RNA sequence: GGGAACGACUCGAGUAGAGUCGAAAACUACCUGGCCUACGGCGCGCUGGGCGUACUGAUCGUGCUGGUGGUCGCGAGGUGAACGUGAUGUCCUACCUAGCGGGCGCCGCGCAAAUCGGCGGGGUCAUAGUCCAUUAAGUUUCGACUUAAUGGACUAAAAAGAAACAACAACAACAAC
Reactivity to 2A3 in 0.01 (KOAc 150mM, MgCl2 10mM, bicine 150mM(pH8.5), 24C), signal-to-noise 9, nucleotides 027 to 126: c050u090a090c010c010u030g070g000c010c010u100a110c060g050g000c020g010c020g030c090u140g030g110g000c020g030u070a110c030u060g050a080u080c050g030u060g030c070u150g030g040u050g030g300u040c010g000c010g030a020g000g030u050g070a040a010c020g050u140g110a130u260g070u040c010c020u030a060c000c010u010a020g000c000g020g030g000c010g000c000c010g000c000g000c010a070a090a050u090c040g020g000c000g000g020g000g000u020c030a080
Reactivity to DMS in 0.01 (KOAc 150mM, MgCl2 10mM, bicine 150mM(pH8.5), 24C), signal-to-noise 5, nucleotides 027 to 126: c080u010a100c020c020u000g010g020c020c010u000a100c090g010g010c060g000c050g000c060u030g010g000g010c130g010u020a100c060u010g000a060u020c200g010u010g020c010u020g020g010u000g000g010u000c010g000c030g000a040g000g030u000g010a080a010c040g010u020g010a120u040g000u000c050c020u040a030c010c020u000a120g010c010g000g000g000c000g010c000c000g010c020g000c030a040a200a030u010c060g000g010c040g000g010g010g000u010c070a140
Description
An RNA of 177 nucleotides, treated with 2A3 and DMS and read out base by base. Conditions: 150 mM KOAc, 10 mM MgCl2 and 150 mM bicine (pH 8.5), 24 C. DMS adducts were read by reverse transcription with MarathonRT. The data come from the RNA Mapping Database (RMDB), library OK1LIB.